[RMDB]
This 207-nucleotide RNA was probed chemically with DMS and 2A3. It was measured as part of the RMDB library M2RFPK. The 2A3 profile rests on 997 reads. Conditions: 150 mM KOAc, 10 mM MgCl2 and 150 mM bicine (pH 8.5), 24 C.
RNA sequence: GGGAACGACUCGAGUAGAGUCGAAAAGGAACCGGAUGUCAUCACGUUGUUGCAGUACCAGAUGGCAUCUUAAAUCCGAUCUGCAAAUAAGCAUGUAGAAAGCUGAUGUGGGCUUUAGCUGGACCGGGGAAUACAGGCAACUUCGGUUGCCUGUAAAGACAUACAACGAGUUCGCUCGUUGUAUGUCAAAAGAAACAACAACAACAAC
Reactivity to DMS in 0.01 (KOAc 150mM, MgCl2 10mM, bicine 150mM(pH8.5), 24C), signal-to-noise 1, nucleotides 027 to 156: g000g000a120a100c050c070g010g010a000u010g030u010c020a040u000c010a190c130g030u000u000g000u000u010g000c020a110g020u000a080c040c070a090g010a060u000g000g000c030a000u000c010u000u010a060a070a100u000c000c040g000a100u010c010u000g030c050a050a070a110u010a060a150g040c030a110u000g030u000a050g000a110a060a090g010c010u000g010a070u000g040u010g000g000g000c030u000u000u000a100g010c010u000g000g010a070c000c020g000g020g010g020a120a230u000a020c010a020g010g010c000a010a040c000u000u000c260g030g000u000u010g000c000c010u010g010u000a000a030a130
Reactivity to 2A3 in 0.01 (KOAc 150mM, MgCl2 10mM, bicine 150mM(pH8.5), 24C), signal-to-noise 1, nucleotides 027 to 156: g080g010a110a030c100c010g000g000a000u000g000u000c010a030u000c020a020c200g040u060u060g000u030u030g030c090a030g080u050a060c070c050a040g010a010u000g010g010c010a000u020c000u000u020a030a030a000u000c010c000g000a060u030c010u020g000c010a020a070a100u140a200a050g040c050a040u100g020u100a060g120a180a110a000g030c030u040g020a080u090g070u100g040g060g040c020u070u040u030a040g030c060u080g000g050a060c020c050g000g020g000g040a050a000u060a040c000a010g010g000c000a000a000c010u000u030c170g050g000u000u000g000c000c020u040g000u000a000a000a000